[RMDB]
Source: RMDB library RFMREP, as collected in RNAgym. This 177-nucleotide RNA was probed chemically with 2A3 and DMS. The DMS profile rests on 4,021 reads. The RNA was probed in 150 mM KOAc, 10 mM MgCl2 and 150 mM bicine (pH 8.5) at 24 C. Values cover nucleotides 27 to 126. The 2A3 profile rests on 5,878 reads.
RNA sequence: GGGAACGACUCGAGUAGAGUCGAAAAAUAGGCUGACAGUGUCCUACACAACGAGGGACGCUGACGCGAAAGCGUGGUCUAGCGAACCAAUUAGGCUGCUUGAUGCGGCCAAUUGCUGACAGAAAAGCACUAUUAUGGGGUUCGCCCCAUAAUAGUGAAAAGAAACAACAACAACAAC
Reactivity to 2A3 in 0.01 (KOAc 150mM, MgCl2 10mM, bicine 150mM(pH8.5), 24C), signal-to-noise 4, nucleotides 027 to 126: a000u040a000g020g000c020u050g100a050c000a000g010u010g010u030c010c010u110a070c110a020c020a130a290c160g100a220g020g010g010a000c000g020c020u000g010a000c010g000c000g050a080a020a000g020c010g030u070g020g000u010c010u010a000g020c010g060a030a030c020c000a000a000u020u010a120g000g000c000u000g020c020u070u170g170a110u300g040c020g000g000c000c000a000a000u010u000g020c070u090g090a050c010a150g150a070a130a010a020g030
Reactivity to DMS in 0.01 (KOAc 150mM, MgCl2 10mM, bicine 150mM(pH8.5), 24C), signal-to-noise 4, nucleotides 027 to 126: a090u000a010g000g000c000u010g040a190c040a000g010u000g010u000c000c000u000a170c130a140c300a070a090c240g010a300g000g000g000a020c000g010c000u000g000a080c000g000c010g000a130a060a150g010c000g020u000g020g020u000c010u000a040g010c100g010a140a190c170c000a030a020u000u000a120g020g000c000u010g000c020u010u030g000a090u010g010c000g020g000c010c000a000a000u000u000g000c110u000g010a110c200a070g000a080a070a130a110g000